[RMDB]
RNA sequence: GGGAACGACUCGAGUAGAGUCGAAAAUAGGCGUUCGCCUUGACCACCGCGAACGCCUGGCGCUGCGGCGCGCAGCGCUUGGCCAGGGCAUAGUUGUGGCGAAUGGCGGAAAGGUCGACGGUGGCAACACUAGCGAGUGAUUCGUCACUCGCUAGUGAAAAGAAACAACAACAACAAC
Reactivity to 2A3 in 0.01 (KOAc 150mM, MgCl2 10mM, bicine 150mM(pH8.5), 24C), signal-to-noise 1, nucleotides 027 to 126: u080a000g000g020c010g010u010u000c000g020c040c000u010u090g070a140c010c000a000c000c050g000c030g040a000a000c010g020c000c000u000g010g000c020g000c020u040g020c000g250g120c160g060c030g000c230a000g000c010g000c000u030u090g030g000c030c020a040g030g070g010c040a070u050a150g120u070u100g060u060g020g000c000g060a090a070u110g020g020c070g010g080a110a030a020g040g050u050c040g060a020c040g040g020u020g000g000c000a060a010
Reactivity to DMS in 0.01 (KOAc 150mM, MgCl2 10mM, bicine 150mM(pH8.5), 24C), signal-to-noise 3, nucleotides 027 to 126: u000a030g010g010c020g010u000u000c030g030c000c060u010u010g020a120c000c030a050c090c090g000c000g010a030a030c030g000c000c000u010g000g010c000g020c000u000g000c010g010g010c220g020c130g020c000a000g010c000g010c010u000u000g010g010c010c040a100g020g020g010c040a090u010a100g010u020u000g010u000g010g010c030g010a110a080u010g000g000c030g000g010a070a120a130g010g000u000c040g020a120c140g020g030u000g010g000c070a100a200
An RNA of 177 nucleotides, treated with 2A3 and DMS and read out base by base. The RNA was probed in 150 mM KOAc, 10 mM MgCl2 and 150 mM bicine (pH 8.5) at 24 C. For DMS, 3,281 sequencing reads were counted. Source: RMDB library OK2TST, as collected in RNAgym. For 2A3, 1,570 sequencing reads were counted.